[RMDB]
RNA sequence: GGGAACGACUCGAGUAGAGUCGAAAAAAUAAGAGUUUGGAUUAACCUAUAGGGAUUUAGCGAUCAAGAAUACAACCUAAGGACCUGGUUGACUUAAUUAUUCCAUAGGUUGGUGGAAGCUAGCGAAUUUCUGAUUUUUAUUCGUAAAAAUCAGAAAAAAAGAAACAACAACAACAAC
Reactivity to DMS in 0.01 (KOAc 150mM, MgCl2 10mM, bicine 150mM(pH8.5), 24C), signal-to-noise 2, nucleotides 027 to 126: a040a050u030a080a090g020a040g020u020u000u000g020g000a050u000u000a010a010c020c010u000a100u000a130g050g000g010a030u010u010u000a030g010c030g010a040u010c030a060a080g000a100a120u020a100c070a060a080c080c050u030a070a140g000g000a110c300c080u000g010g000u000u000g000a120c020u010u000a020a010u010u000a030u000u000c000c000a060u010a010g000g000u010u010g000g000u000g000g040a020a140g010c010u010a050g010c150g000a080a070
Annotation: The record gives the reactivity of an RNA of 177 nucleotides to DMS. The DMS profile rests on 1,268 reads. The data come from the RNA Mapping Database (RMDB), library M2PK90. The reactions ran in a buffer of 150 mM KOAc, 10 mM MgCl2 and 150 mM bicine (pH 8.5), at 24 C.